[RMDB]
RNA sequence: GGGAACGACUCGAGUAGAGUCGAAAAGCUUCUGCUUCCAACAUCGCGGAGCAGUAUUUACAAACUAUCACGUGACAGAAGGACGACCGCUCGUCCUGCCUACCGUCUCCAACGAGGGCAAGGUGGACGGUUCUCAGUGAUUCGUCACUGAGAACCGAAAAGAAACAACAACAACAAC
Reactivity to 2A3 in 0.01 (KOAc 150mM, MgCl2 10mM, bicine 150mM(pH8.5), 24C), signal-to-noise 2, nucleotides 027 to 126: g020c030u060u000c010u000g020c030u050u050c000c020a130a070c060a260u160c120g000c160g000g000a000g000c000a000g030u020a040u040u300u140a050c040a050a150a030c030u090a070u210c090a040c150g110u070g150a050c030a100g110a100a060g100g030a040c060g040a040c050c040g000c110u030c000g000u010c000c000u010g000c020c000u050a090c020c000g100u080c040u030c030c010a110a130c080g070a160g070g000g000c040a010a000g080g000u000g030g000a000
Reactivity to DMS in 0.01 (KOAc 150mM, MgCl2 10mM, bicine 150mM(pH8.5), 24C), signal-to-noise 1, nucleotides 027 to 126: g000c170u000u000c000u000g000c000u000u000c010c080a060a290c200a090u000c140g060c050g000g000a000g010c010a020g000u000a050u020u000u000a160c160a050a070a080c090u000a050u000c110a000c100g000u000g030a110c070a110g010a160a040g010g000a060c050g040a050c120c070g020c100u000c030g000u000c020c000u000g000c060c030u000a070c070c010g010u010c030u020c050c180a070a130c170g000a060g000g000g000c050a010a030g000g010u000g000g000a040